[RMDB]
RNA sequence: GGGAACGACUCGAGUAGAGUCGAAAAACGCCAGUUGUGCUUGACUAUACUGCAUUCAGCAAGGUUUUACGUAAGUAUGAACCAAAGUCUGGGCUUUAUGAGUUUGGUGGCCAAAAAUUUUAUGGUUACAGUCGAGAAACGCCUCUUGAAGACGUUAAUCCAGUACUUUUUUCGAAAAGUACUGGAUAAAAGAAACAACAACAACAAC
Reactivity to 2A3 in 0.01 (KOAc 150mM, MgCl2 10mM, bicine 150mM(pH8.5), 24C), signal-to-noise 2, nucleotides 027 to 156: a010c070g070c000c040a020g020u030u040g030u060g010c010u030u020g000a010c010u040a050u100a150c070u040g100c040a070u040u220c040a040g050c050a090a110g040g010u000u060u020u020a020c000g020u040a060a120g010u010a110u250g050a000a000c010c000a050a010a010g030u070c040u050g000g030g000c020u050u160u030a070u110g070a010g040u000u180u140g060g000u040g030g000c010c020a030a130a090a070a110u230u270u140u200a080u070g000g000u010u000a030c050a020g050u010c030g060a000g050a050a060a010c050g020c020c030u070c060u070u140g060a050a040g020a020c000g010u040u040a000
Reactivity to DMS in 0.01 (KOAc 150mM, MgCl2 10mM, bicine 150mM(pH8.5), 24C), signal-to-noise 2, nucleotides 027 to 156: a050c070g020c020c010a090g000u000u000g010u000g020c060u000u010g010a100c040u000a120u000a040c000u000g000c030a110u010u000c030a050g050c060a240a290g010g020u010u000u000u000a040c020g020u000a070a230g030u000a050u010g010a000a020c020c000a060a110a140g030u000c020u000g010g020g010c020u010u000u000a040u010g000a050g020u000u000u010g010g020u000g000g000c030c040a000a040a060a060a110u020u000u000u000a080u020g020g000u000u000a040c050a070g020u000c040g000a200g010a120a040a060c010g020c000c000u000c060u000u000g020a100a050g000a020c000g020u000u000a110